[RMDB]
RNA sequence: GGGAACGACUCGAGUAGAGUCGAAAAGCGCCACGAUGCGGCGUCCGAUGCGGAUCGCGUCGAGCUCGUCGAGCGCAAAAUAGUCGGCCAAACCCGAUAUGCGGGCGUGCAUUUCGGCGCCGCCCAGUGAACAAAGAGUUUUCGAACUCUUUGUUCAAAAAGAAACAACAACAACAAC
Reactivity to DMS in 0.01 (KOAc 150mM, MgCl2 10mM, bicine 150mM(pH8.5), 24C), signal-to-noise 7, nucleotides 027 to 126: g010c010g020c010c010a070c150g000a000u000g010c050g030g030c010g010u000c030c000g020a100u000g010c010g010g010a080u010c130g020c110g030u000c030g020a100g010c050u000c030g010u010c140g010a110g020c020g020c140a060a050a100a110u010a120g020u000c010g010g010c020c050a090a100a130c210c000c000g000a060u010a030u000g020c020g000g000g010c020g010u010g010c000a030u000u000u010c300g010g000c020g010c000c020g000c000c010c000a180g010
Reactivity to 2A3 in 0.01 (KOAc 150mM, MgCl2 10mM, bicine 150mM(pH8.5), 24C), signal-to-noise 3, nucleotides 027 to 126: g000c000g010c010c020a020c040g010a010u030g010c070g060g010c000g090u020c020c010g000a020u060g030c010g020g050a110u060c060g000c020g030u030c030g030a050g040c050u040c040g300u110c150g060a030g030c020g000c000a000a000a060a000u090a020g130u020c010g000g010c040c030a070a050a070c040c010c000g060a090u040a050u260g140c020g000g010g010c010g020u020g010c000a010u020u050u080c060g000g020c020g000c020c000g040c000c010c010a020g120